Chemical mapping of a 177-nucleotide RNA with 2A3 and DMS. Conditions: 150 mM KOAc, 10 mM MgCl2 and 150 mM bicine (pH 8.5), 24 C. Values cover nucleotides 27 to 126.

[RMDB]
RNA sequence: GGGAACGACUCGAGUAGAGUCGAAAAGAUAUGGAGAAGCUCCGAUAAGCGUAUGGGUCGGAAACGACCUUUGACGCUUUUGACGGAGCCUCCUAAGUCAAAAGGGUACCAGUUCGCUGGUACCCAACAACUAGACCUAGUUCGCUAGGUCUAGUUGAAAAGAAACAACAACAACAAC
Reactivity to 2A3 in 0.01 (KOAc 150mM, MgCl2 10mM, bicine 150mM(pH8.5), 24C), signal-to-noise 2, nucleotides 027 to 126: g020a010u070a030u130g020g020a030g030a300a090g020c000u010c010c020g050a100u030a100a010g000c010g000u010a010u060g010g000g000u000c000g020g030a040a040a060c000g000a000c010c000u010u030u040g050a000c000g010c000u020u030u040u060g080a020c010g000g000a000g010c000c000u000c000c000u000a070a000g050u020c070a020a040a120a150g010g010g010u010a000c010c000a000g010u040u080c290g060c130u000g000g000u010a000c000c000c000a010a000
Reactivity to DMS in 0.01 (KOAc 150mM, MgCl2 10mM, bicine 150mM(pH8.5), 24C), signal-to-noise 5, nucleotides 027 to 126: g010a030u010a300u010g000g000a020g010a180a180g020c000u000c000c000g000a130u000a020a010g010c000g020u000a040u000g000g010g020u010c000g010g010a080a080a200c010g000a000c000c000u000u000u010g010a010c010g000c000u000u000u000u000g010a160c050g000g000a010g000c010c000u000c000c000u000a040a110g000u000c030a050a070a120a130g010g010g000u000a000c000c000a000g000u000u010c290g010c000u000g000g000u010a010c000c010c000a010a030